[RMDB]
RNA sequence: GGGAACGACUCGAGUAGAGUCGAAAAGAUAUGGAAGCGUUUGGGACAUGCUGCGAGGGUCGGAAACGACCUGCGCAGCAACAGCCCACGGACGCUUCCUAAGUCAAAAGCGGUGUUCGCACCGCAAUCUACCCAUUACGUUCGCGUAAUGGGUAGAAAAAGAAACAACAACAACAAC
Reactivity to DMS in 0.01 (KOAc 150mM, MgCl2 10mM, bicine 150mM(pH8.5), 24C), signal-to-noise 3, nucleotides 027 to 126: g010a030u000a300u010g000g010a010a000g020c010g020u000u000u000g010g000g000a050c050a300u010g010c010u000g000c000g010a150g000g000g000u000c010g040g000a100a060a180c000g030a000c000c010u010g010c010g030c000a010g000c010a010a020c250a160g020c010c010c010a110c300g010g000a020c010g000c000u000u000c000c000u000a010a060g000u010c030a100a050a190a140g010c010g000g010u000g000u000u000c230g040c000a030c000c000g030c010a010a030
Reactivity to 2A3 in 0.01 (KOAc 150mM, MgCl2 10mM, bicine 150mM(pH8.5), 24C), signal-to-noise 1, nucleotides 027 to 126: g010a020u050a060u220g000g000a010a010g000c010g010u020u110u100g040g000g000a100c140a200u290g020c010u020g000c000g020a220g000g000g000u010c000g020g000a050a070a020c010g000a020c000c010u000g000c010g000c000a000g020c000a020a000c010a010g020c010c000c010a010c020g040g020a000c000g000c000u000u000c000c000u000a020a020g050u020c030a070a030a100a110g010c010g000g000u020g010u090u190c300g020c150a010c000c000g000c010a000a000